[RMDB]
RNA sequence: GGGAACGACUCGAGUAGAGUCGAAAAUAAGCAAAAGACAACCACCUUUCCCGCUGACAAUAGCUUUAUCCCUCUGCACUUCGGUAAUAUGAGGGCACAGUAAAUCCCGCAAGGAUGAGAAUGUGAUUAAACAGUUACAGCUUCGGCUGUAACUGAACGUCUUUUGAGACUUCGGUCUCAAAAGACGAAAAGAAACAACAACAACAAC
Reactivity to 2A3 in 0.01 (KOAc 150mM, MgCl2 10mM, bicine 150mM(pH8.5), 24C), signal-to-noise 1, nucleotides 027 to 156: u050a020a000g070c060a000a070a070a070g140a200c140a110a020c000c030a030c020c050u050u090u020c000c020c010g030c090u080g000a020c080a130a080u130a040g020c000u130u130u270a080u070c000c000c000u020c000u010g000c040a040c030u020u000c140g110g000u010a060a050u080a040u300g000a000g020g000g000c000a000c000a000g000u000a000a030a000u000c000c000c000g160c060a040a000g050g030a000u040g000a000g000a050a000u000g030u020g000a050u070u300a100a120a040c010a000g000u000u000a030c000a000g000c050u020u040c100g120g000c000u000g010u000a000a000c030u020g000a010a000